An RNA of 177 nucleotides, treated with 2A3 and DMS and read out base by base. The DMS profile rests on 1,099 reads. For 2A3, 1,483 sequencing reads were counted. For DMS the reverse transcriptase was MarathonRT. The reactions ran in a buffer of 150 mM KOAc, 10 mM MgCl2 and 150 mM bicine (pH 8.5), at 24 C.

[RMDB]
RNA sequence: GGGAACGACUCGAGUAGAGUCGAAAACAUCUGCAGAUCAUGCUUCUGCUUCAAACGACGCGCCUUCGAGCGAAUCUCCAUCAUCGUCAAAUUCGCGGAGUCAUCAAUAUAGAUAGGCGCCUGUUCGUGAUAGCAACGUGUUCGCACGUUGCUAUCAAAAAGAAACAACAACAACAAC
Reactivity to 2A3 in 0.01 (KOAc 150mM, MgCl2 10mM, bicine 150mM(pH8.5), 24C), signal-to-noise 2, nucleotides 027 to 126: c030a090u080c120u130g000c020a000g010a020u090c050a140u270g090c110u030u020c010u000g030c000u150u080c090a180a110a050c020g030a000c010g000c010g000c010c010u040u070c020g060a050g020c010g010a020a030u070c030u010c070c020a080u080c010a040u050c030g200u090c070a100a150a120u100u060c050g000c040g100g030a010g080u040c010a080u020c010a180a030u100a020u060a160g060a060u110a080g010g000c000g020c030c020u090g010u070u050c010g030
Reactivity to DMS in 0.01 (KOAc 150mM, MgCl2 10mM, bicine 150mM(pH8.5), 24C), signal-to-noise 2, nucleotides 027 to 126: c120a050u020c070u000g010c020a030g020a040u000c150a110u010g040c190u000u000c020u000g010c000u000u030c140a050a120a100c010g010a060c140g010c000g010c040c020u000u000c070g010a170g020c070g000a040a020u000c040u020c050c130a090u010c160a090u000c100g000u000c150a050a050a140u000u000c040g020c070g000g020a080g000u000c130a130u000c120a070a080u000a160u020a110g020a100u000a000g020g000c000g030c010c250u010g000u040u000c050g010